[RMDB]
RNA sequence: GGGAACGACUCGAGUAGAGUCGAAAACUUUGCUUUUAACGCCUGCGCAACCUUUGGAACUUAUAGCGGGCCGGAGUACCCAGCACGGUCCCGGAAGCAGAUUGCUGCCAUGGGGAUUCCUCAACAACGUCUCUUCGUAUUUCGAUACGAAGAGACGAAAAGAAACAACAACAACAAC
Reactivity to DMS in 0.01 (KOAc 150mM, MgCl2 10mM, bicine 150mM(pH8.5), 24C), signal-to-noise 2, nucleotides 027 to 126: c060u020u020u000g050c110u000u000u000u020a150a170c130g010c010c010u000g010c020g000c200a060a060c070c080u000u000u020g030g010a110a050c150u020u020a160u010a170g000c020g030g000g030c000c030g030g000a060g000u000a090c040c020c130a110g010c040a150c130g000g020u000c040c000c010g000g000a080a100g010c040a040g020a300u000u000g000c040u000g000c090c030a170u010g000g000g000g000a170u000u000c010c000u000c100a090a040c190a060a100
Reactivity to 2A3 in 0.01 (KOAc 150mM, MgCl2 10mM, bicine 150mM(pH8.5), 24C), signal-to-noise 1, nucleotides 027 to 126: c090u090u070u020g040c030u000u090u060u260a090a120c020g020c000c010u040g040c030g020c050a050a090c010c070u110u070u220g000g030a000a140c070u250u100a180u110a210g050c040g000g020g020c050c000g000g000a030g020u060a080c000c000c060a030g000c030a030c040g100g000u000c030c010c000g020g000a000a000g010c030a080g050a300u210u300g040c040u010g000c010c010a020u040g010g020g030g040a040u050u100c030c000u010c010a010a040c040a070a100
Description: An RNA of 177 nucleotides, treated with DMS and 2A3 and read out base by base. The data come from the RNA Mapping Database (RMDB), library OK2TRN. The RNA was probed in 150 mM KOAc, 10 mM MgCl2 and 150 mM bicine (pH 8.5) at 24 C. For 2A3 the reverse transcriptase was SuperScript II with manganese.